[RMDB]
RNA sequence: GGGAACGACUCGAGUAGAGUCGAAAAUAAUAACUCCCUCUGCGAUGGGGGUAGUUUCUCCACUACUUCAGUGCUGUGGUGGGUGAAGUAGUAGUUGAACUAUCUUCUUCACAGUGGCUCAAAUUGCGAUAGCCGUUUAGUUCGCUAAACGGCUAUCAAAAGAAACAACAACAACAAC
Reactivity to 2A3 in 0.01 (KOAc 150mM, MgCl2 10mM, bicine 150mM(pH8.5), 24C), signal-to-noise 1, nucleotides 027 to 126: u050a000a010u070a080a050c000u030c000c000c000u020c030u020g020c010g040a030u020g000g020g010g000g000u000a000g000u020u050u000c000u020c000c000a000c010u020a020c000u000u010c000a100g150u080g170c040u070g090u180g210g080u090g070g140g070u030g000a000a010g000u030a000g010u000a020g000u010u010g000a000a000c000u010a000u000c000u040u000c000u040u030c000a000c010a040g040u040g070g000c000u080c210a160a190a180u140u160g000c040
Reactivity to DMS in 0.01 (KOAc 150mM, MgCl2 10mM, bicine 150mM(pH8.5), 24C), signal-to-noise 1, nucleotides 027 to 126: u000a090a090u010a100a140c070u000c020c000c000u010c000u000g010c070g000a030u010g010g000g010g020g010u000a000g000u000u000u000c020u000c010c010a050c000u000a020c000u000u010c010a040g020u000g010c090u000g020u000g000g030u000g000g020g010u000g000a000a010g010u000a010g000u000a050g020u000u000g010a010a060c000u010a010u000c000u000u000c020u000u000c000a020c000a030g010u000g010g000c120u000c150a080a070a140u000u000g010c300